[RMDB]
RNA sequence: GGGAACGACUCGAGUAGAGUCGAAAAUCGUGAGAUGUGGUGCCUCACGCGCUCGAGGCGUCCGUGGUCAGAGAGACCACUGACGCAAAAACUCGAGCGCAAAUAAAUAGCAUUACAUUCAGAAUAAGCAUCACGAUUAUUUCGAUAAUCGUGAUGCAAAAGAAACAACAACAACAAC
Reactivity to DMS in 0.01 (KOAc 150mM, MgCl2 10mM, bicine 150mM(pH8.5), 24C), signal-to-noise 1, nucleotides 027 to 126: u020c100g000u000g000a030g000a080u010g000u020g020g000u010g010c020c020u000c090a170c090g000c080g070c030u000c000g000a050g030g000c030g000u000c000c090g030u000g040g000u000c000a180g000a220g060a210g020a000c000c000a050c030u000g000a000c000g000c000a000a050a080a060a300c000u000c000g000a000g090c000g070c000a000a030a080u040a070a050a150u040a060g000c000a010u000u000a000c000a090u000u000c120a110g000a090a070u070a050a040
Reactivity to 2A3 in 0.01 (KOAc 150mM, MgCl2 10mM, bicine 150mM(pH8.5), 24C), signal-to-noise 2, nucleotides 027 to 126: u190c070g020u020g040a070g010a040u090g000u000g000g010u000g000c000c020u070c000a020c140g010c000g000c000u000c000g000a020g050g000c000g000u000c000c000g000u010g000g000u030c050a060g150a050g040a010g000a300c000c000a000c000u000g000a000c000g000c000a040a080a060a060a060c010u010c000g010a000g020c000g000c000a010a000a000u050a000a020a010u140a020g000c000a000u000u000a010c000a010u050u190c070a040g100a140a090u190a230a030